Source: RMDB library OK2TST, as collected in RNAgym.
Structure probing data (DMS and 2A3) for a 177-nucleotide construct.
Reactivities are given for positions 27 through 126.
The RNA was probed in 150 mM KOAc, 10 mM MgCl2 and 150 mM bicine (pH 8.5) at 24 C.
For DMS the reverse transcriptase was MarathonRT.

RNA sequence: GGGAACGACUCGAGUAGAGUCGAAAAGUCGGGGGCUGCUGUGGCGAUCUGGACAACCACUGGCUGGACCAUUCCAGCAAACGAGGCUGUGGCCGUCAACGAACGCAUGAAUUAUGGCGCAGAGUCAUCCUCUUCUGGAUUUCGAUCCAGAAGAGGAAAAAGAAACAACAACAACAAC
Reactivity to DMS in 0.01 (KOAc 150mM, MgCl2 10mM, bicine 150mM(pH8.5), 24C), signal-to-noise 2, nucleotides 027 to 126: g010u000c080g000g010g010g010g020c050u010g000c080u000g000u010g000g030c060g030a060u000c040u000g050g000a090c120a160a090c070c020a080c150u020g000g040c020u000g020g010a050c300c160a270u000u000c010c000a020g010c050a020a080a110c110g010a080g010g000c040u010g030u000g010g030c020c060g000u000c050a000a080c110g000a050a100c090g000c040a090u000g010a050a140u000u010a110u000g000g030c030g010c100a070g000a140g000u010c050a110
Reactivity to 2A3 in 0.01 (KOAc 150mM, MgCl2 10mM, bicine 150mM(pH8.5), 24C), signal-to-noise 1, nucleotides 027 to 126: g090u040c030g010g000g000g080g000c020u080g000c030u020g030u060g020g000c020g020a110u000c030u080g040g040a040c030a050a060c040c040a070c090u060g080g000c000u000g000g080a130c090c040a050u130u000c010c010a000g010c000a020a000a050c110g060a030g030g010c030u030g040u040g130g020c000c040g040u060c040a050a070c040g060a100a030c040g070c110a070u160g050a080a040u240u100a050u160g020g040c050g010c000a000g040a000g100u030c010a060